Chemical mapping of a 177-nucleotide RNA with DMS and 2A3. For 2A3, 824 sequencing reads were counted.
RNA sequence: GGGAACGACUCGAGUAGAGUCGAAAAGAAGCAUGGAAGUAUUACCCCGGCGAAUGCCAGUAAUACCGAAGUAGUUCGCUACGAAGAUAUAGGAGGCGUAUGCCGGGCCUAUAUCGAAGCAUGCGAAGGGUAUGCUAUGCUUCGGCAUAGCAUACCCAAAAGAAACAACAACAACAAC
Reactivity to DMS in 0.01 (KOAc 150mM, MgCl2 10mM, bicine 150mM(pH8.5), 24C), signal-to-noise 2, nucleotides 027 to 126: g020a260a180g000c000a010u010g010g000a140a220g000u000a000u020u010a000c090c090c200c090g000g000c020g080a160a090u090g050c020c000a180g000u010a000a010u000a000c010c030g020a110a170g000u000a090g020u000u130c080g010c000u030a100c030g010a080a180g000a000u020a000u030a000g030g050a270g000g000c000g000u040a170u020g100c020c030g010g000g100c040c010u000a000u000a000u000c010g000a030a240g040c030a020u000g000c040g000a020a040
Reactivity to 2A3 in 0.01 (KOAc 150mM, MgCl2 10mM, bicine 150mM(pH8.5), 24C), signal-to-noise 2, nucleotides 027 to 126: g110a010a050g010c050a000u000g020g020a100a030g010u010a000u040u030a010c050c060c200c140g000g000c080g090a300a000u300g000c000c000a040g000u070a000a000u000a000c000c000g030a050a010g020u030a020g000u040u040c250g000c020u030a010c000g050a080a000g000a000u020a000u000a020g010g010a010g000g000c040g020u200a150u300g000c020c030g000g010g000c020c010u000a000u000a000u010c000g020a000a030g070c020a000u000g020c000g020a190a110